[RMDB]
RNA sequence: GGGAACGACUCGAGUAGAGUCGAAAAUGAGGCUCUGAAGCAGAGCUAAUGAAAUAUUUUCUGAUAUUGGGCUUCAGAUAUAGGGUUUAGUUUAGAAACUGGUUUAGCCAAGUUGAAAUGUGUUGCUAACCAUCUCCUCCUCCUCCUCCUCCUCCUCGUUAACCAACUAGUUCGCUAGUUGGUUAACAAAAGAAACAACAACAACAAC
Reactivity to 2A3 in 0.01 (KOAc 150mM, MgCl2 10mM, bicine 150mM(pH8.5), 24C), signal-to-noise 3, nucleotides 027 to 156: u080g010a010g030g010c010u010c010u050g060a110a030g020c020a020g030a040g090c060u110a040a040u070g020a010a080a020u150a060u090u140u070u040c030u050g030a070u050a070u120u110g040g000g000c000u040u050c010a010g000a010u130a020u050a080g040g000g000u090u110u080a050g010u030u090u100a060g060a060a090a010c070u040g010g040u070u120u180a010g000c010c010a060a040g010u090u110g160a120a150a140u220g030u030g040u120u090g010c020u000a030a000c010c010a030u010c030u020c050c000u030c010c000u020c000c000u020c000c000u020c010c010u030c010c020u040c000c010u030c020
Reactivity to DMS in 0.01 (KOAc 150mM, MgCl2 10mM, bicine 150mM(pH8.5), 24C), signal-to-noise 2, nucleotides 027 to 156: u000g040a110g000g030c040u000c040u000g020a100a110g000c030a150g010a090g000c110u000a060a080u010g000a180a110a150u010a090u000u010u000u010c040u000g000a080u010a140u010u010g010g010g040c020u000u010c020a060g010a080u000a080u000a150g000g020g020u000u000u010a080g010u010u000u010a120g010a140a080a080c050u000g020g010u000u000u000a100g000c040c050a050a200g020u000u000g010a060a110a080u000g030u010g010u010u000g020c020u000a090a110c030c020a100u000c020u000c030c010u000c040c020u010c020c030u010c010c010u020c010c010u020c050c020u000c010c070u000c110
Background: The record gives the reactivity of an RNA of 207 nucleotides to 2A3 and DMS. The reactions ran in a buffer of 150 mM KOAc, 10 mM MgCl2 and 150 mM bicine (pH 8.5), at 24 C. It was measured as part of the RMDB library OK3TST. The DMS profile rests on 3,717 reads. The 2A3 profile rests on 1,709 reads.